[RMDB]
RNA sequence: GGGAACGACUCGAGUAGAGUCGAAAACACAAGGGGUGUCAUAGGAGAUUAAGGUGAUUGAGCACCUUACUGAUGACCCCCUGCAGAGAUGGUGGGCGUCUUUGGGAUCUGGCCUACAAUGGGCUCUCAUAAUCAUAGGUAGCAUAGCAGGAAUAUACACUCAAAAUCAUUUCGAUGAUUUUGAGUGAAAAGAAACAACAACAACAAC
Reactivity to 2A3 in 0.01 (KOAc 150mM, MgCl2 10mM, bicine 150mM(pH8.5), 24C), signal-to-noise 2, nucleotides 027 to 156: c110a000c060a060a040g000g000g000g010u170g010u070c010a000u050a060g180g040a060g090a100u210u140a020a000g000g010u010g010a140u120u170g090a110g110c000a000c010c000u010u000a010c020u060g080a030u010g010a000c000c020c000c000c000u010g000c010a030g010a000g010a000u030g010g040u030g000g010g000c040g020u010c040u050u080u040g030g010g010a040u020c060u060g010g030c000c040u050a070c100a070a180u110g020g000g000c030u010c000u020c020a090u090a260a080u080c020a040u050a080g000g040u050a020g040c040a020u070a050g010c000a020g030g040a030a000u290a160u260a130
Reactivity to DMS in 0.01 (KOAc 150mM, MgCl2 10mM, bicine 150mM(pH8.5), 24C), signal-to-noise 2, nucleotides 027 to 156: c060a070c080a080a070g040g030g040g090u030g030u000c020a050u000a170g010g020a130g030a230u000u000a000a040g030g020u010g010a300u000u010g020a210g010c020a030c000c000u000u010a070c040u010g000a070u000g000a090c050c000c010c000c010u000g000c090a090g000a130g010a060u000g000g010u000g010g040g040c070g010u000c040u000u000u000g030g040g000a070u000c040u000g020g010c000c020u020a030c060a060a110u000g020g010g020c020u010c020u000c050a070u000a070a100u010c050a070u010a020g010g030u000a060g010c030a070u000a020g030c040a070g010g020a100a080u000a110u000a240